[RMDB]
RNA sequence: GGGAACGACUCGAGUAGAGUCGAAAAGAUCGGCCCAACGCUCAGGGAAACGGAGCAGCUCAAUAAAAACUUUUGAUAUUAGUUUUUAUGGGUAUUUACACUCUGGUGAGGGGAGCUGAGUACGGAACUUAAAGACAAACUUCGGUUUGUCUUUAAGAAAAGAAACAACAACAACAAC
Reactivity to DMS in 0.01 (KOAc 150mM, MgCl2 10mM, bicine 150mM(pH8.5), 24C), signal-to-noise 7, nucleotides 027 to 126: g010a090u020c070g010g010c010c010c020a100a120c120g000c030u000c030a050g010g000g010a130a130a110c080g000g000a020g010c110a120g000c010u010c020a080a050u000a010a000a000a000a010c000u000u020u020u020g010a170u050a130u020u010a010g000u000u000u000u000u000a000u000g000g010g020u010a050u030u020u040a120c160a150c020u010c030u000g000g010u010g000a300g000g000g000g000a080g010c000u010g000a110g000u010a080c090g000g010a100a120
Reactivity to 2A3 in 0.01 (KOAc 150mM, MgCl2 10mM, bicine 150mM(pH8.5), 24C), signal-to-noise 7, nucleotides 027 to 126: g070a060u110c040g080g000c020c010c000a010a050c040g010c010u080c040a030g060g020g000a080a110a050c080g030g010a030g030c040a010g010c000u010c010a170a190u030a030a000a000a000a000c010u050u080u110u160g110a080u140a150u300u140a060g000u020u000u000u010u010a000u010g000g000g020u030a030u010u080u050a040c060a010c020u050c030u040g080g060u080g050a080g030g050g020g010a020g010c020u020g020a010g040u060a040c060g060g030a040a000
Chemical mapping of a 177-nucleotide RNA with DMS and 2A3. Conditions: 150 mM KOAc, 10 mM MgCl2 and 150 mM bicine (pH 8.5), 24 C. Source: RMDB libraries RFM100 and RFMREP, as collected in RNAgym.